An RNA of 207 nucleotides, treated with 2A3 and read out base by base. The RNA was probed in 150 mM KOAc, 10 mM MgCl2 and 150 mM bicine (pH 8.5) at 24 C. For 2A3 the reverse transcriptase was SuperScript II with manganese. It was measured as part of the RMDB library OK3TST.

RNA sequence: GGGAACGACUCGAGUAGAGUCGAAAAGCUAGUCGGUGACGACUAGCAGCCACGACUAAGGUCGUGGGAAGAUGCUCACAAACUGCUGAGUGGCAUCAAUAACUACAUCAUCAGCAGAAACCGGAUUAACGGAUAACAUUAAAAUUUAAGAUGUAGGCUCAUGGAGUGGUUUCGACCACUCCAUGAGAAAAGAAACAACAACAACAAC
Reactivity to 2A3 in 0.01 (KOAc 150mM, MgCl2 10mM, bicine 150mM(pH8.5), 24C), signal-to-noise 3, nucleotides 027 to 156: g000c000u000a000g000u000c000g110g040u090g030a040c000g000a000c000u010a000g010c030a000g030c000c000a000c000g000a000c010u090a140a140g100g020u000c000g020u000g000g000g000a020a010g010a000u000g010c010u050c300a020c000a010a180a090c010u020g000c000u030g000a020g010u010g000g000c000a000u000c000a000a040u210a060a020c000u020a020c000a000u010c000a010u010c000a000g000c010a000g000a080a020a030c030c000g050g030a260u230u120a160a020c020g020g100a060u150a180a060c110a140u170u300a110a080a140a060u170u210u120a110a030g020a020u040g030u010a010g060g010